[RMDB]
RNA sequence: GGGAACGACUCGAGUAGAGUCGAAAAGGACUGUACUACUUUGUAGGUGCAGCAGUCGCCCAGUGGGAGAGCGCCAUAUAGUAUGUUGUUGAGCGGGGAACAAAUUAGGGGAAAUUAAAUUGGCUUAUUAUUCACCCUCUUUCGAGAGGGUGAAUAAAAAAGAAACAACAACAACAAC
Reactivity to DMS in 0.01 (KOAc 150mM, MgCl2 10mM, bicine 150mM(pH8.5), 24C), signal-to-noise 2, nucleotides 027 to 126: g010g000a030c000u000g000u020a100c020u000a010c000u030u000u050g030u010a030g000g040u020g000c130a100g000c000a040g010u010c030g000c020c000c000a160g020u000g020g000g000a050g010a030g010c070g000c020c080a070u000a100u030a110g000u010a060u010g000u010u000g020u000u000g010a160g030c110g010g000g000g000a060a060c090a050a060a090u030u010a100g000g000g000g000a030a050a090u050u010a030a140a090u000u010g000g000c020u000u010a130
Reactivity to 2A3 in 0.01 (KOAc 150mM, MgCl2 10mM, bicine 150mM(pH8.5), 24C), signal-to-noise 2, nucleotides 027 to 126: g060g010a000c000u000g010u010a040c000u010a000c010u190u180u300g030u070a000g000g130u040g060c120a040g040c010a000g020u000c000g000c000c080c000a010g000u070g010g030g000a040g000a030g010c050g040c010c000a120u110a000u010a030g300u160a080u250g090u020u000g020u020u060g060a010g020c120g030g010g030g070a060a060c070a040a070a030u120u060a020g020g000g070g020a000a000a030u130u090a030a100a000u040u060g010g000c020u070u000a010

The data come from the RNA Mapping Database (RMDB), library RFM100.
An RNA of 177 nucleotides, treated with DMS and 2A3 and read out base by base.
For DMS the reverse transcriptase was MarathonRT.
For 2A3 the reverse transcriptase was SuperScript II with manganese.
The 2A3 profile rests on 516 reads.
Values cover nucleotides 27 to 126.
High 2A3 reactivity points to a flexible backbone, as in loops and unpaired stretches.
For DMS, 4,743 sequencing reads were counted.